[RMDB]
RNA sequence: GGGAACGACUCGAGUAGAGUCGAAAACAGUGAGACUUCGGUCUCACUGAAAUGACUAUGCACGAUGACGAGGACGAAGAUGCGGAGGACGACGAGGAACAAAAACAGCAAGGUUCGCCUUGCUGAAGAACAUGUCUUCGUUCGCGAAGACAUGUUCAAAAGAAACAACAACAACAAC
Reactivity to 2A3 in 0.01 (KOAc 150mM, MgCl2 10mM, bicine 150mM(pH8.5), 24C), signal-to-noise 2, nucleotides 027 to 126: c000a000g010u010g000a000g000a000c020u050u090c240g130g000u000c000u010c000a000c000u010g000a000a000a000u120g000a010c010u030a040u120g010c050a020c050g050a050u090g050a030c030g010a030g010g000a000c040g030a040a040g020a080u070g100c020g040g010a000g040g020a010c000g000a000c020g050a030g080g080a070a000c040a010a070a000a020a010c000a000g000c010a000a000g070g000u040u070c200g110c030c010u000u010g000c000u000g020a010a000
Reactivity to DMS in 0.01 (KOAc 150mM, MgCl2 10mM, bicine 150mM(pH8.5), 24C), signal-to-noise 2, nucleotides 027 to 126: c010a020g030u000g000a000g010a010c000u000u000c230g030g010u000c000u000c000a010c000u010g000a020a070a120u000g010a070c030u000a040u010g000c010a090c100g000a020u010g030a070c100g000a090g000g000a090c080g000a070a070g000a060u000g010c050g010g000a050g010g010a060c150g010a060c050g000a050g010g010a020a030c160a060a060a030a050a150c010a000g000c000a010a010g000g000u010u020c210g020c000c000u000u000g000c000u000g010a030a040

Source: RMDB library M2PK50, as collected in RNAgym. Structure probing data (2A3 and DMS) for a 177-nucleotide construct. 2A3 adducts were read by reverse transcription with SuperScript II with manganese. Reactivities are given for positions 27 through 126. The reactions ran in a buffer of 150 mM KOAc, 10 mM MgCl2 and 150 mM bicine (pH 8.5), at 24 C.